[RMDB]
RNA sequence: GGGAACGACUCGAGUAGAGUCGAAAACGAAGUGACGCAUCACGGCGACCUGGUCGGCCGCCAUCGCGCGCUUCGAAUACGGCGCGUGCCGCGCAUCGCUCGGCGGCUUGCCCGACGCCCCGUAGCAAGGAUAUGGCAGUUUCGACUGCCAUAUCCUAAAAGAAACAACAACAACAAC
Reactivity to 2A3 in 0.01 (KOAc 150mM, MgCl2 10mM, bicine 150mM(pH8.5), 24C), signal-to-noise 1, nucleotides 027 to 126: c010g000a010a000g020u010g200a170c000g040c000a040u140c060a030c120g010g000c000g030a040c000c040u120g120g200u220c070g090g000c010c000g020c000c030a070u090c070g010c000g010c000g030c000u020u020c010g000a000a000u090a030c030g040g020c010g040c040g020u090g100c050c050g020c040g060c000a070u180c070g000c060u030c050g050g020c010g050g000c000u020u140g040c000c000c010g000a010c020g020c020c030c000c010g060u070a030g020c060a050
Reactivity to DMS in 0.01 (KOAc 150mM, MgCl2 10mM, bicine 150mM(pH8.5), 24C), signal-to-noise 2, nucleotides 027 to 126: c020g010a050a030g010u020g000a180c030g010c000a090u000c170a130c220g000g010c020g010a010c000c000u030g000g020u030c210g020g000c020c010g020c020c030a100u000c230g000c020g010c000g000c000u010u010c010g010a140a150u000a080c120g000g000c140g040c040g000u010g000c080c040g020c050g050c070a090u000c090g010c050u010c060g010g000c080g030g020c010u010u000g010c010c000c010g010a080c130g000c000c070c000c000g030u000a020g040c140a190
Structure probing data (2A3 and DMS) for a 177-nucleotide construct. Source: RMDB library OK2TRN, as collected in RNAgym. Reactivities are given for positions 27 through 126. The RNA was probed in 150 mM KOAc, 10 mM MgCl2 and 150 mM bicine (pH 8.5) at 24 C. The 2A3 profile rests on 1,641 reads. Reactivities are rounded to 0.1 and cut off at 0 and 3.